[RMDB]
RNA sequence: GGGAACGACUCGAGUAGAGUCGAAAAACAUAUUACGAUAUGAUUCAGAUGGUGUCUUACUGGUUCGUACCAAGGGACAUAAUGGUUUCUUGUUUCCGACCAAAGAACAAGUGGCGAGCCUGAAUAAAAAACUGACUGCCGUUCGCGGCAGUCAGAACGUUUUCACUAUGUUCGCAUAGUGAAAACGAAAAGAAACAACAACAACAAC
Reactivity to 2A3 in 0.01 (KOAc 150mM, MgCl2 10mM, bicine 150mM(pH8.5), 24C), signal-to-noise 4, nucleotides 027 to 156: a000c040a030u130a060u070u230a070c100g060a030u040a020u130g060a040u070u060c030a040g060a130u100g080g050u060g020u040c020u050u090a120c030u050g020g020u060u120c040g070u130a060c020c010a020a010g020g000g020a010c000a020u230a110a110u150g080g000u000u020u010c000u000u030g030u020u060u020c050c030g000a040c020c010a080a050a000g020a040a020c030a070a030g030u030g060g000c020g020a010g050c010c030u040g020a050a040u130a100a070a010a010a010a010c000u000g000a000c000u000g000c030c000g020u040u050c220g000c000g100g000c000a000g000u000c000a000g000a000a000
Reactivity to DMS in 0.01 (KOAc 150mM, MgCl2 10mM, bicine 150mM(pH8.5), 24C), signal-to-noise 1, nucleotides 027 to 156: a170c040a070u000a060u000u020a150c080g000a150u000a040u000g000a160u000u000c040a070g010a130u010g030g010u000g000u010c040u010u000a090c130u010g000g000u000u010c080g000u000a120c120c020a040a100g010g000g010a080c030a100u010a120a230u000g010g030u000u030u000c010u000u000g000u000u000u000c000c010g030a000c050c040a100a090a000g010a080a030c030a030a120g020u000g000g030c110g000a080g000c010c010u000g000a020a090u060a000a020a030a060a130a170c010u000g010a010c000u000g010c000c000g030u000u010c260g010c080g000g000c010a010g050u010c000a000g000a030a050